RNA sequence: GGGAACGACUCGAGUAGAGUCGAAAAGAUAUGGAGCCAGGGAGCUCUGCGUCGGAAACGACGUAAGAGCAUCGAUCUGGUCUCCUAAGUCAAAAGUAAACUUCUGUGUUCGCACAGAAGUUUACAAGAAUUGAUACAUCUUCGGAUGUAUCAAUUCAAAAGAAACAACAACAACAAC
Reactivity to 2A3 in 0.01 (KOAc 150mM, MgCl2 10mM, bicine 150mM(pH8.5), 24C), signal-to-noise 2, nucleotides 027 to 126: g000a010u060a040u150g000g000a000g000c000c000a000g040g010g000a030g000c000u000c000u000g010c010g000u000c000g030g020a130a050a040c010g000a000c010g020u070a160a070g000a000g000c000a060u270c020g000a020u030c010u000g010g140u030c040u000c010c000u000a070a010g050u020c030a030a040a060a150g000u000a000a010a000c000u010u000c000u000g020u010g050u120u110c300g070c100a000c000a000g000a000a000g000u010u000u000a000c000a000a020
Reactivity to DMS in 0.01 (KOAc 150mM, MgCl2 10mM, bicine 150mM(pH8.5), 24C), signal-to-noise 4, nucleotides 027 to 126: g020a020u000a300u020g000g010a020g020c020c010a010g000g000g000a040g010c000u000c000u000g010c010g020u000c010g010g000a110a090a220c000g010a030c000g010u000a020a020g030a010g000c010a190u000c200g000a060u010c000u000g000g000u010c000u000c000c000u000a010a100g000u010c020a090a090a150a130g010u000a010a000a020c000u000u000c000u000g020u000g010u000u010c200g020c000a010c000a010g000a000a010g000u000u000u000a000c000a100a070